[RMDB]
RNA sequence: GGGAACGACUCGAGUAGAGUCGAAAAAUGAGACAAGGGCGUUCUCUCCCUGUUGCUUGCCCUUGAAAAAGACGUCACUGCCCAGCAAUGCCCUUUGUCCCCAAAGGCUCUGCUGCUCCGCCGCAGAGUCAGUGAGGCUGUUCGCAGCCUCACUGACAAAAGAAACAACAACAACAAC
Reactivity to DMS in 0.01 (KOAc 150mM, MgCl2 10mM, bicine 150mM(pH8.5), 24C), signal-to-noise 2, nucleotides 027 to 126: a080u000g010a100g000a120c020a080a020g000g000g020c020g030u000u010c060u000c050u000c040c030c020u000g030u000u000g000c100u010u010g000c050c020c000u020u020g000a060a070a070a120a110g000a070c090g010u010c040a030c070u000g000c030c050c030a050g000c070a080a100u000g000c000c010c030u000u000u010g000u000c020c010c010c100a040a080a160g030g000c020u000c020u010g010c010u000g010c050u000c180c120g000c050c090g010c030a010g000a090
The record gives the reactivity of an RNA of 177 nucleotides to DMS.
The RNA was probed in 150 mM KOAc, 10 mM MgCl2 and 150 mM bicine (pH 8.5) at 24 C.
It was measured as part of the RMDB library OK2TST.
DMS adducts were read by reverse transcription with MarathonRT.